[RMDB]
RNA sequence: GGGAACGACUCGAGUAGAGUCGAAAAAGUGUCUUAACCUAGCUUAGGUUUUCCUACAAGCAACUAGAGAAAAUGGCCUAAGUGGUGCCCCGCACAAUACUACUGGAAUCUGGUCUGGGUGCUUGUCCACUUGUUGCUUAUUCGUAAGCAACAAGUGAAAAGAAACAACAACAACAAC
Reactivity to 2A3 in 0.01 (KOAc 150mM, MgCl2 10mM, bicine 150mM(pH8.5), 24C), signal-to-noise 4, nucleotides 027 to 126: a020g140u130g030u060c060u100u070a020a030c000c030u040a080g200c090u130u110a000g000g000u010u030u020u030c000c000u010a010c010a030a010g060c010a020a020c020u030a010g010a010g070a130a130a140a200u150g070g000c010c010u050a090a010g010u020g030g000u040g010c020c060c070c090g110c010a030c010a010a170u120a130c020u020a020c020u020g040g040a080a080u070c060u110g030g060u000c020u010g040g020g000u020g030c000u010u010g010u000c030
Reactivity to DMS in 0.01 (KOAc 150mM, MgCl2 10mM, bicine 150mM(pH8.5), 24C), signal-to-noise 4, nucleotides 027 to 126: a120g010u010g010u010c090u000u000a060a030c010c010u000a110g030c230u010u000a040g000g010u000u000u000u000c000c000u000a020c020a010a040g010c030a020a030c040u000a020g010a070g010a100a120a090a090u010g000g000c030c020u010a080a040g020u000g000g000u010g000c040c080c080c130g010c100a040c070a060a070u000a040c030u000a080c090u000g000g010a190a050u010c080u000g020g000u000c010u000g010g000g010u000g000c010u000u010g000u000c120

Overview: This 177-nucleotide RNA was probed chemically with 2A3 and DMS. Conditions: 150 mM KOAc, 10 mM MgCl2 and 150 mM bicine (pH 8.5), 24 C. The DMS profile rests on 5,452 reads.